Record summary
Structure probing data (DMS and 2A3) for a 207-nucleotide construct.
RNA sequence: GGGAACGACUCGAGUAGAGUCGAAAAGAGGUCAGGACAGCAGCCCUGUGGGCUGCAUGAUACACUGUGGCUGGAGUUAUUGUGACCCCCUGGUGCAGUGCUCCCACGGCCAGUGGUGCACACAGGGCCAUUCACUGUCCAUAGACUGAAACCAUGAAAUGAUUAAAAUAUUCGUAUUUUAAUCAUUAAAAGAAACAACAACAACAAC
Reactivity to DMS in 0.01 (KOAc 150mM, MgCl2 10mM, bicine 150mM(pH8.5), 24C), signal-to-noise 2, nucleotides 027 to 156: g000a300g030g020u000c010a140g000g010a050c010a040g030c060a100g020c000c000c010u000g010u000g030g020g070c040u010g000c050a010u000g010a230u000a100c070a020c010u010g040u010g040g040c070u030g020g000a080g020u000u000a040u010u010g020u000g010a100c000c000c120c090c070u000g040g030u000g000c030a050g000u010g010c020u010c030c040c120a100c090g030g000c040c020a070g030u000g020g040u000g010c050a100c010a020c020a020g000g030g050c020c060a080u020u000c150a060c020u010g000u010c010c010a090u000a100g020a070c000u000g020a140a090a070c010c010a100u000g010a170
Reactivity to 2A3 in 0.01 (KOAc 150mM, MgCl2 10mM, bicine 150mM(pH8.5), 24C), signal-to-noise 3, nucleotides 027 to 156: g100a030g020g000u010c010a010g010g000a010c000a000g090c020a000g000c010c000c010u030g010u030g020g110g130c110u090g000c030a000u010g000a010u070a040c030a000c010u070g090u140g150g020c030u060g130g000a020g040u300u300a060u030u060g040u150g220a240c010c000c000c020c150u160g000g000u020g000c000a010g000u000g000c010u050c010c070c030a120c060g040g000c010c000a010g010u020g020g040u010g000c030a000c000a000c000a010g000g000g020c000c000a030u180u160c030a010c020u000g000u000c000c000a010u030a020g000a000c010u000g030a080a010a030c010c000a010u080g040a050

For 2A3, 2,076 sequencing reads were counted.
Conditions: 150 mM KOAc, 10 mM MgCl2 and 150 mM bicine (pH 8.5), 24 C.